[RMDB]
RNA sequence: GGGAACGACUCGAGUAGAGUCGAAAAAAUGUAUCGUCCUCCGGGACGUCUUAUAGCCAGGGGCGCAAUGCGGCCAGCCGGGACUGAGGAACGCGCUUCGGCACGGAUGCUGGCAUAAUGGUUGUAACAUGUUGGAUGGGUUCGCCCAUCCAACAUGAAAAGAAACAACAACAACAAC
Reactivity to 2A3 in 0.01 (KOAc 150mM, MgCl2 10mM, bicine 150mM(pH8.5), 24C), signal-to-noise 1, nucleotides 027 to 126: a010a000u300g040u150a100u170c050g010u000c000c000u000c080c070g060g030g000a020c000g010u000c030u030u060a100u090a010g120c000c010a030g060g000g000g010c020g000c010a100a080u210g000c000g010g050c000c000a010g000c010c000g000g000g120a150c000u000g000a080g010g000a040a020c130g070c040g000c060u130u110c000g060g000c020a000c000g090g000a050u050g120c010u010g000g000c000a000u050a010a050u070g120g000u000u040g010u000a000a000
Reactivity to DMS in 0.01 (KOAc 150mM, MgCl2 10mM, bicine 150mM(pH8.5), 24C), signal-to-noise 1, nucleotides 027 to 126: a050a000u060g000u010a040u030c040g030u000c000c000u020c110c150g030g000g000a020c000g000u040c000u000u000a030u000a070g010c040c000a060g060g000g040g000c030g000c150a200a060u040g020c010g030g010c000c010a240g110c030c000g000g050g000a140c020u000g030a090g000g000a150a040c220g000c100g010c000u010u050c050g030g030c000a040c030g030g000a100u040g040c000u020g000g050c000a060u110a090a060u000g000g000u000u000g000u040a090a190
About this RNA: The record gives the reactivity of an RNA of 177 nucleotides to 2A3 and DMS. The reactions ran in a buffer of 150 mM KOAc, 10 mM MgCl2 and 150 mM bicine (pH 8.5), at 24 C. Values are in units of 0.01, from 0 to 300, in steps of 10. The data come from the RNA Mapping Database (RMDB), library RFM100. Values cover nucleotides 27 to 126.